RNA sequence: GGGAACGACUCGAGUAGAGUCGAAAAUCCGAGCGAAGGGGCCGAACGGGGAGGGGGUCGCCCCGAGAGGGGAUCAAUGGUAAAGAGGCGAGGAAAUCGGUAGAAACUACUCCCAAGAAGGACCAGACAAUAGCAAAUAGUUCGCUAUUUGCUAUUGAAAAGAAACAACAACAACAAC
Reactivity to 2A3 in 0.01 (KOAc 150mM, MgCl2 10mM, bicine 150mM(pH8.5), 24C), signal-to-noise 2, nucleotides 027 to 126: u000c000c000g000a040g000c050g090a070a050g020g010g000g000c030c030g070a070a030c030g020g030g000g050a070g030g040g000g000g010u050c040g030c000c000c000c020g030a020g010a000g020g030g000g000a020u070c030a040a060u130g040g000u040a010a040a040g060a070g060g000c090g020a020g000g050a020a080a030u030c030g040g060u050a050g080a040a030a000c020u030a030c010u020c010c000c010a000a020g030a020a030g030g020a010c000c010a010g020a020
Reactivity to DMS in 0.01 (KOAc 150mM, MgCl2 10mM, bicine 150mM(pH8.5), 24C), signal-to-noise 3, nucleotides 027 to 126: u000c010c000g020a100g010c090g010a120a080g010g000g020g010c050c040g000a110a110c070g000g000g000g000a070g000g010g000g000g030u000c100g000c010c020c010c010g020a140g000a200g030g000g000g010a030u010c100a050a060u010g000g000u010a050a090a110g010a150g000g010c170g040a080g010g000a020a100a100u000c020g030g020u010a070g010a030a060a060c060u000a080c080u000c000c020c030a130a130g020a060a050g010g010a080c020c050a090g010a210
Structure probing data (2A3 and DMS) for a 177-nucleotide construct. The DMS profile rests on 2,079 reads. Reactivities are given for positions 27 through 126. The RNA was probed in 150 mM KOAc, 10 mM MgCl2 and 150 mM bicine (pH 8.5) at 24 C.